[RMDB]
RNA sequence: GGGAACGACUCGAGUAGAGUCGAAAAGGAUGAUCUGGUCCCGGCCAGUUAUCCGAAUUAGUACCGGGAUUGCAUCGUCGAGCCGUCAGGGGCGAAGACGAGAACCUGAAAGCACGAAGCACUGGGCGGUGCGGGUGCGAGAUAUAACGCCCAACAAAAUACUGCUAGUAUUCGUACUAGCAGUAUUAAAAGAAACAACAACAACAAC
Reactivity to 2A3 in 0.01 (KOAc 150mM, MgCl2 10mM, bicine 150mM(pH8.5), 24C), signal-to-noise 3, nucleotides 027 to 156: g000g000a010u040g010a010u110c030u050g000g000u000c020c000c000g020g030c020c000a000g010u050u040a010u040c000c000g010a090a060u190u080a100g040u100a070c020c000g000g010g000a030u060u150g030c030a090u000c010g020u010c000g050a010g000c020c020g170u250c170a080g100g000g000g080c020g030a050a010g040a000c010g000a000g020a010a050c010c040u080g100a090a060a000g010c010a000c040g010a050a000g060c000a010c060u060g010g020g000c030g010g000u010g010c020g030g080g000u000g000c030g050a000g030a000u210a010u040a140a040c030g000c000c010c000a030a010c050a010a030
Reactivity to DMS in 0.01 (KOAc 150mM, MgCl2 10mM, bicine 150mM(pH8.5), 24C), signal-to-noise 3, nucleotides 027 to 156: g000g030a030u000g010a030u010c030u000g000g030u000c010c050c110g040g000c000c010a060g050u010u000a050u000c060c040g020a130a060u000u000a150g030u000a060c030c030g040g000g020a120u010u010g010c010a170u010c010g020u000c020g010a300g010c010c010g000u020c180a210g010g040g010g030c000g000a110a230g010a120c040g010a070g000a060a090c020c010u000g000a100a140a140g010c030a070c050g010a210a230g000c040a050c070u010g010g000g020c040g010g010u000g020c000g000g040g000u000g010c030g000a090g010a140u000a090u010a060a100c020g020c000c000c010a070a100c150a130a150
Chemical mapping of a 207-nucleotide RNA with 2A3 and DMS. The RNA was probed in 150 mM KOAc, 10 mM MgCl2 and 150 mM bicine (pH 8.5) at 24 C. For DMS, 5,130 sequencing reads were counted. The 2A3 profile rests on 2,159 reads. It was measured as part of the RMDB library OK3TST.